The record gives the reactivity of an RNA of 207 nucleotides to DMS and 2A3. The DMS profile rests on 3,155 reads. The reactions ran in a buffer of 150 mM KOAc, 10 mM MgCl2 and 150 mM bicine (pH 8.5), at 24 C. DMS adducts were read by reverse transcription with MarathonRT.

[RMDB]
RNA sequence: GGGAACGACUCGAGUAGAGUCGAAAAGGGUUCACGGGAGUGCAGCACGGACUCCUGCCGUGCCUGCACGUUGCCGCGACGGUGACGACCAUCGGCCGCGAGAUGCUGCUCGCGACCCGCGAGUACGUCCACGCGCGCUGGGCGGCCUUCGAACAGCUACAUGUUGGCAUUUCGAUGCCAACAUGUAAAAAGAAACAACAACAACAAC
Reactivity to DMS in 0.01 (KOAc 150mM, MgCl2 10mM, bicine 150mM(pH8.5), 24C), signal-to-noise 1, nucleotides 027 to 156: g020g020g000u000u010c050a050c000g020g020g030a140g010u000g000c010a120g020c000a020c020g030g010a050c060u010c200c040u020g010c010c000g020u010g030c070c030u000g000c010a010c020g010u000u010g000c000c010g040c050g020a090c090g010g020u000g010a030c020g010a000c030c010a070u010c040g010g020c040c000g050c000g020a170g000a020u000g000c080u000g020c010u000c010g050c020g000a040c020c130c070g000c010g010a040g020u010a040c050g010u010c020c030a040c010g000c010g040c090g000c000u000g000g020g010c000g000g000c040c030u000u000c030g020a120a140c080a220g000c060
Reactivity to 2A3 in 0.01 (KOAc 150mM, MgCl2 10mM, bicine 150mM(pH8.5), 24C), signal-to-noise 1, nucleotides 027 to 156: g100g000g030u070u040c070a000c080g040g030g010a060g000u030g000c000a000g000c010a010c000g010g050a130c080u130c090c130u140g060c020c000g000u000g000c070c060u020g030c010a000c000g010u020u020g020c000c020g020c030g020a050c020g020g010u060g090a100c030g040a090c000c020a070u060c040g010g040c040c000g000c000g020a040g010a000u030g010c210u040g010c020u010c000g050c020g110a300c050c010c060g010c010g010a020g000u000a010c010g000u000c040c020a080c000g020c010g000c020g000c020u030g000g010g000c000g000g010c000c020u020u010c010g020a070a030c000a040g060c010